[RMDB]
RNA sequence: GGGAACGACUCGAGUAGAGUCGAAAACCUCCUACCUUCGGGUAGGAGGAAAGCACGCGCAACGUAAGCGACAAGCAAGUCAACGCGUACGAACGUAAAUAAAAACGCAGGGCUUCGGCCCUGCGAAUCGAAAGUAUUUGUUCGCAAAUACUUUCGAAAAAGAAACAACAACAACAAC
Reactivity to 2A3 in 0.01 (KOAc 150mM, MgCl2 10mM, bicine 150mM(pH8.5), 24C), signal-to-noise 4, nucleotides 027 to 126: c000c000u000c000c000u010a020c000c000u020u050c220g150g000g000u000a000g010g000a000g010g000a020a020a010g010c020a000c060g020c020g010c050a070a120c070g030u080a080a060g020c010g060a110c090a070a040g100c040a070a060g050u070c040a080a040c040g010c000g020u040a030c040g060a110a010c020g020u130a030a140a110u170a050a140a120a010a000c010g000c000a010g000g000g020c010u060u120c240g090g010c000c000c000u000g000c000g000a000a010
Reactivity to DMS in 0.01 (KOAc 150mM, MgCl2 10mM, bicine 150mM(pH8.5), 24C), signal-to-noise 4, nucleotides 027 to 126: c000c000u000c000c000u010a010c000c010u000u020c210g030g030g010u000a010g000g000a010g010g000a010a020a100g000c110a040c040g000c020g000c100a150a100c090g000u000a090a110g000c030g010a090c130a110a130g010c060a090a160g000u000c030a080a070c040g010c020g020u000a020c040g010a140a070c110g000u010a050a090a090u010a060a060a110a130a110c030g010c010a010g000g000g000c000u010u000c180g030g020c010c000c000u000g000c000g010a020a010